[RMDB]
RNA sequence: GGGAACGACUCGAGUAGAGUCGAAAACUCUUACUGUUCGCAGUAAGAGAAUGGGAUUCGAAUCCCUCCCUAACGGCGGGUAAGCGGCCCAAAAAUAAAAUAGAGAGGCGUGCUUCGGCACGCCUAACACGCUUAAUAGUUUCGACUAUUAAGCGUGAAAAGAAACAACAACAACAAC
Reactivity to DMS in 0.01 (KOAc 150mM, MgCl2 10mM, bicine 150mM(pH8.5), 24C), signal-to-noise 2, nucleotides 027 to 126: c010u000c000u000u000a000c000u000g040u000u020c170g030c000a020g000u000a020a000g000a010g020a010a060u000g000g000g000a000u020u010c270g000a130a230u000c000c000c010u000c000c000c000u000a140a130c130g020g000c190g000g000g010u000a130a150g010c040g020g030c000c000c020a010a100a070a150a090u000a050a050a090a090u000a090g010a140g010a040g020g030c020g030u000g010c000u000u000c120g000g040c000a020c020g000c000c000u000a010a090
Reactivity to 2A3 in 0.01 (KOAc 150mM, MgCl2 10mM, bicine 150mM(pH8.5), 24C), signal-to-noise 1, nucleotides 027 to 126: c000u000c000u010u000a000c000u000g040u020u060c190g010c120a010g000u010a010a000g000a010g000a000a010u010g000g000g030a040u150u200c070g080a100a110u020c000c000c000u000c000c010c000u010a110a010c060g080g010c030g000g000g070u090a160a030g280c050g080g040c070c010c000a010a060a040a020a020u160a010a100a000a010u190a030g150a010g020a030g000g010c010g000u000g020c000u030u070c120g010g000c030a000c010g000c000c010u000a010a000
Structure probing data (DMS and 2A3) for a 177-nucleotide construct. For DMS, 1,233 sequencing reads were counted. The reactions ran in a buffer of 150 mM KOAc, 10 mM MgCl2 and 150 mM bicine (pH 8.5), at 24 C. DMS adducts were read by reverse transcription with MarathonRT.